[RMDB]
RNA sequence: GGGAACGACUCGAGUAGAGUCGAAAAGCUUCUUCUUCGAUUCGGACCGGCUCAUCUCGACAAGAGGCGGCAGUCCUCAGUGCUCUUACUCUUUUCUGUAAAGAGGAGACUGCUGGACUCGCCGCCCAAGUUCGAGCAUGAGCCACGUUCCGAACGAGAUCUUACAAAGGUUCGCCUUUGUAAGAUCAAAAGAAACAACAACAACAAC
Reactivity to 2A3 in 0.01 (KOAc 150mM, MgCl2 10mM, bicine 150mM(pH8.5), 24C), signal-to-noise 5, nucleotides 027 to 156: g030c050u040u010c010u100u010c020u050u030c060g300a300u010u010c010g020g000a020c010c030g000g000c000u000c000a010u000c000u000c010g000a010c030a130a130g100a130g040g010c000g000g000c000a010g000u000c010c010u010c010a060g000u140g250c020u010c010u110u270a300c010u060c000u080u130u130u070c170u300g300u300a030a000a000g000a000g000g020a000g010a000c010u010g090c050u010g000g000a000c000u040c140g000c000c000g000c000c000c000a010a000g000u020u010c010g000a000g010c050a010u000g000a000g000c000c000a000c000g000u080u000c020c000g000a000a010c000g010a020
Conditions: 150 mM KOAc, 10 mM MgCl2 and 150 mM bicine (pH 8.5), 24 C. The record gives the reactivity of an RNA of 207 nucleotides to 2A3. For 2A3 the reverse transcriptase was SuperScript II with manganese. Values are in units of 0.01, from 0 to 300, in steps of 10.